[RMDB]
RNA sequence: GGGAACGACUCGAGUAGAGUCGAAAAAGGCACAUGAAUCACUUGAACCCAGGAGGCAGAGGUUGCUGUGCACCACUGCACUCCAGCCUGGGUGACAGAACGAGACCUUGACUCAAAAAAAAAAAAACUAUCUUACUUCAUUCGUGAAGUAAGAUAGAAAAGAAACAACAACAACAAC
Reactivity to 2A3 in 0.01 (KOAc 150mM, MgCl2 10mM, bicine 150mM(pH8.5), 24C), signal-to-noise 3, nucleotides 027 to 126: a010g100g000c100a120c040a180u210g130a130a100u120c030a050c050u050u010g020a010a010c000c010c000a010g010g010a030g040g000c020a000g010a040g050g040u220u140g030c110u220g160u230g050c010a000c000c000a010c010u010g000c010a140c060u000c010c010a010g080c010c020u010g000g000g000u020g020a010c030a030g040a110a030c050g010a030g100a200c010c000u010u010g040a020c000u000c030a040a020a030a010a000a010a000a010a000a000a120a040a000
Reactivity to DMS in 0.01 (KOAc 150mM, MgCl2 10mM, bicine 150mM(pH8.5), 24C), signal-to-noise 3, nucleotides 027 to 126: a050g010g020c070a080c090a070u000g030a130a110u010c050a090c030u000u000g020a280a040c040c000c010a070g010g010a060g020g030c020a010g010a040g010g010u010u000g050c050u010g020u000g020c030a040c020c010a120c010u000g000c020a090c050u000c080c080a060g000c040c090u000g000g000g000u000g010a250c200a000g000a060a080c100g000a090g000a090c020c020u000u000g000a150c020u010c010a010a010a010a010a010a000a000a010a020a030a060a110a090

An RNA of 177 nucleotides, treated with 2A3 and DMS and read out base by base. For 2A3 the reverse transcriptase was SuperScript II with manganese. For DMS, 2,638 sequencing reads were counted. Reactivities are rounded to 0.1 and cut off at 0 and 3. The 2A3 profile rests on 3,218 reads. Conditions: 150 mM KOAc, 10 mM MgCl2 and 150 mM bicine (pH 8.5), 24 C.